Conditions: 150 mM KOAc, 10 mM MgCl2 and 150 mM bicine (pH 8.5), 24 C.
Structure probing data (2A3 and DMS) for a 177-nucleotide construct.
For DMS the reverse transcriptase was MarathonRT.
[RMDB]
RNA sequence: GGGAACGACUCGAGUAGAGUCGAAAACCCGUUUUGUUCGCAAAACGGGACUCAUCUUUGCUUGGCAGCAUAGCAGGUCUUGGCUGGACUGCUGGCUUAUCCUUGGAGGCAGUUUCGACUGCCUCAAUCAGAAUCAUUAGUUCGCUAAUGAUUCUGAAAAAGAAACAACAACAACAAC
Reactivity to 2A3 in 0.01 (KOAc 150mM, MgCl2 10mM, bicine 150mM(pH8.5), 24C), signal-to-noise 8, nucleotides 027 to 126: c000c010c000g000u010u000u000u010g020u010u050c200g000c110a000a010a000a000c000g000g000g040a060c010u020c050a200u040c060u090u120u140g040c030u040u130g060g000c020a010g000c020a100u090a070g000c020a050g100g140u060c050u170u200g180g030c090u060g010g040a080c000u000g000c000u000g010g010c000u020u090a110u110c020c030u020u080g180g000a000g000g000c000a010g000u000u050u130c160g060a020c000u010g010c000c000u000c000a000a000
Reactivity to DMS in 0.01 (KOAc 150mM, MgCl2 10mM, bicine 150mM(pH8.5), 24C), signal-to-noise 8, nucleotides 027 to 126: c010c000c000g010u000u000u000u000g010u000u010c190g020c010a010a000a010a010c000g000g000g010a120c070u000c080a120u010c070u000u000u000g010c030u000u000g010g010c300a040g000c040a060u010a020g010c020a040g010g010u000c060u000u010g020g000c100u000g000g010a080c020u000g010c010u000g000g000c020u000u000a080u000c020c030u000u010g020g010a020g000g010c000a000g000u000u000u010c170g010a030c000u000g000c000c000u000c000a010a050
For 2A3, 25,506 sequencing reads were counted.